[RMDB]
RNA sequence: GGGAACGACUCGAGUAGAGUCGAAAAGUGGAGAGAUUAUCUUCGGUGGUGAGACAAUGCGUUUCUGGGAUUUACGUGCACCAUGGGUUGAACCAUUACGUGGUCCAAACGGUUUAGAUAUUAAUAACUAUGAUUAUCUCUUCGGAGAUAAUCAUAGAAAAGAAACAACAACAACAAC
Reactivity to 2A3 in 0.01 (KOAc 150mM, MgCl2 10mM, bicine 150mM(pH8.5), 24C), signal-to-noise 4, nucleotides 027 to 126: g100u070g000g030a040g020a010g010a150u130u040a070u160c030u050u020c040g020g000u080g020g020u060g010a050g010a010c050a060a050u130g020c040g040u000u050u040c050u070g060g020g000a010u040u050u200a060c030g010u030g030c030a020c050c010a050u040g050g000g030u040u120g060a060a030c010c000a010u030u060a020c060g000u020g000g000u000c020c000a030a060a010c040g010g040u040u090u120a060g030a040u080a050u300u220a110a100u220a120a020
Reactivity to DMS in 0.01 (KOAc 150mM, MgCl2 10mM, bicine 150mM(pH8.5), 24C), signal-to-noise 7, nucleotides 027 to 126: g010u000g010g010a050g000a060g010a130u000u010a080u010c040u000u000c060g010g020u010g010g020u000g010a110g000a050c100a070a050u000g000c060g000u000u010u000c070u000g010g010g000a080u000u000u010a050c060g020u000g010c150a060c110c100a060u010g000g000g010u000u010g010a090a100c020c020a060u000u000a070c130g020u000g000g000u000c020c020a030a060a070c090g000g000u010u000u010a070g010a110u000a080u010u010a060a090u010a080a230

Annotation
The record gives the reactivity of an RNA of 177 nucleotides to 2A3 and DMS. High 2A3 reactivity points to a flexible backbone, as in loops and unpaired stretches. Source: RMDB library OK2TST, as collected in RNAgym. 2A3 adducts were read by reverse transcription with SuperScript II with manganese.